[RMDB]
RNA sequence: GGGAACGACUCGAGUAGAGUCGAAAAGGCCUUUCAAGGGGCUGGGAUAUGGGGGCAGCCAAGGCUCCAGAAGGCUCUGCCUAUGGGCUGGGAUCUUUGUGCAGACCCACGUUCCAGGACAGAGAGAGCGAGGUCCUGACUUCGGUCAGGACUUCGCAAAAGAAACAACAACAACAAC
Reactivity to DMS in 0.01 (KOAc 150mM, MgCl2 10mM, bicine 150mM(pH8.5), 24C), signal-to-noise 3, nucleotides 027 to 126: g010g000c010c000u010u000u040c180a160a110g000g000g010g010c030u010g030g000g010a070u010a050u040g000g000g000g010g010c100a090g010c090c060a050a110g010g000c000u000c000c000a130g000a090a070g010g000c000u000c010u020g000c100c060u000a030u010g000g000g000c010u000g000g000g000a090u000c020u000u020u010g000u030g040c100a100g000a130c010c010c000a040c150g020u000u010c000c000a030g000g000a070c010a040g000a080g000a090g000a120
Reactivity to 2A3 in 0.01 (KOAc 150mM, MgCl2 10mM, bicine 150mM(pH8.5), 24C), signal-to-noise 6, nucleotides 027 to 126: g050g020c000c000u030u070u130c120a130a150g050g000g020g020c010u040g010g050g020a050u070a140u220g050g000g000g020g050c020a010g040c000c010a020a010g050g000c010u020c010c020a050g100a090a030g040g000c010u010c010u070g060c010c000u110a210u160g010g010g000c020u050g030g010g040a160u010c010u020u080u120g090u210g060c020a000g040a150c010c000c000a010c060g010u020u030c000c000a000g010g010a030c040a020g040a000g010a000g010a010
This 177-nucleotide RNA was probed chemically with DMS and 2A3. For DMS, 7,815 sequencing reads were counted. DMS adducts were read by reverse transcription with MarathonRT. The reactions ran in a buffer of 150 mM KOAc, 10 mM MgCl2 and 150 mM bicine (pH 8.5), at 24 C.